[RMDB]
RNA sequence: GGGAACGACUCGAGUAGAGUCGAAAACGAUCUUUCGAGAUCGGAUUUACCUUUGUGUAGAGAAACUGUAGGGAGCUGUCGCAACCCAUUGGGUUGGACUGACAGCGAAGAACUACAGCACUCUCUACACUCUGGUUAACGCGUCGUUCGCGACGAAUAACACUCUCUGCUUCGGCAGAGAGUGUUAAAAAGAAACAACAACAACAAC
Reactivity to 2A3 in 0.01 (KOAc 150mM, MgCl2 10mM, bicine 150mM(pH8.5), 24C), signal-to-noise 1, nucleotides 027 to 156: c010g000a000u020c030u060u100u100c130g170a040g010a050u010c010g030g000a020u050u070u040a100c020c010u060u090u060g030u000g000u000a000g000a000g000a040a060a110c000u010g000u000a020g000g050g050a070g000c020u030g010u000c000g010c040a000a000c010c000c070a300u180u300g000g000g000u030u000g050g060a050c120u140g000a020c040a000g000c000g000a030a000g030a000a000c000u000a000c020a000g030c000a060c010u020c000u010c000u000a000c000a000c010u000c190u200g050g000u200u300a040a040c080g000c020g070u040c000g010u010u040c050g000c060g150a000c230g220a070a030

The record gives the reactivity of an RNA of 207 nucleotides to 2A3.
2A3 adducts were read by reverse transcription with SuperScript II with manganese.
Conditions: 150 mM KOAc, 10 mM MgCl2 and 150 mM bicine (pH 8.5), 24 C.
It was measured as part of the RMDB library RNAMAK.
Reactivities are rounded to 0.1 and cut off at 0 and 3.
The 2A3 profile rests on 647 reads.